This 177-nucleotide RNA was probed chemically with DMS.
RNA sequence: GGGAACGACUCGAGUAGAGUCGAAAAGAGCUUGUAUUGGCGCAAACUGAGGUGCUGUGUAAUGAGUGAGUCAUCUCGCGAAGGUUACGGCUCUGUUGUCAUCCGCACGGAGAAGCGCCGAGCCACCCUAACCGUAUAGCUUCGGCUAUACGGUUAGAAAAGAAACAACAACAACAAC
Reactivity to DMS in 0.01 (KOAc 150mM, MgCl2 10mM, bicine 150mM(pH8.5), 24C), signal-to-noise 6, nucleotides 027 to 126: g010a110g020c020u010u010g030u000a140u010u000g010g020c010g010c020a080a110a130c080u000g000a160g020g010u000g000c010u000g030u010g020u000a080a040u000g010a180g020u000g000a090g020u010c130a080u010c020u000c030g020c170g000a130a090g010g000u000u010a050c060g010g000c010u010c010u010g000u000u000g000u010c080a110u010c060c070g000c120a040c110g000g000a100g000a140a170g010c010g010c010c010g000a020g000c010c040a120c050c030
DMS adducts were read by reverse transcription with MarathonRT.
Values cover nucleotides 27 to 126.